[RMDB]
RNA sequence: GGGAACGACUCGAGUAGAGUCGAAAAGCAUGGUGGUUUAAUUAUGUAGUCUCGCUUUUGGACCAGAUUAAUUUCCAUCCUUUAUUAUCCUUGUGCUUGUAAUAUUGCUUAGUUCAAUGCACAUGAGCCAGACCAAAUCUUUCGAGAUUUGGUCUGGAAAAGAAACAACAACAACAAC
Reactivity to 2A3 in 0.01 (KOAc 150mM, MgCl2 10mM, bicine 150mM(pH8.5), 24C), signal-to-noise 5, nucleotides 027 to 126: g040c050a050u090g010g010u030g000g030u020u040u110a020a000u020u090a270u230g070u140a070g030u030c060u100c140g180c130u070u120u170u300g030g000a010c000c000a010g010a040u010u010a030a020u060u050u060c000c010a010u010c000c000u070u100u080a150u090u120a090u080c020c000u020u000g020u000g000c000u000u000g030u160a060a060u070a150u170u150g100c070u050u090a040g040u060u050c000a020a070u160g000c000a000c000a010u070g050a020g090
Reactivity to DMS in 0.01 (KOAc 150mM, MgCl2 10mM, bicine 150mM(pH8.5), 24C), signal-to-noise 2, nucleotides 027 to 126: g030c260a010u030g040g010u020g030g020u000u000u000a010a020u020u010a050u020g030u010a080g000u000c020u020c200g010c300u050u010u000u000g030g000a000c030c010a010g000a060u010u000a000a030u000u000u010c010c000a000u000c160c050u000u030u040a070u060u010a080u020c020c000u010u010g020u020g000c000u010u000g000u040a020a050u020a080u000u030g000c130u000u000a130g000u030u010c000a060a010u040g010c030a000c000a090u020g010a130g010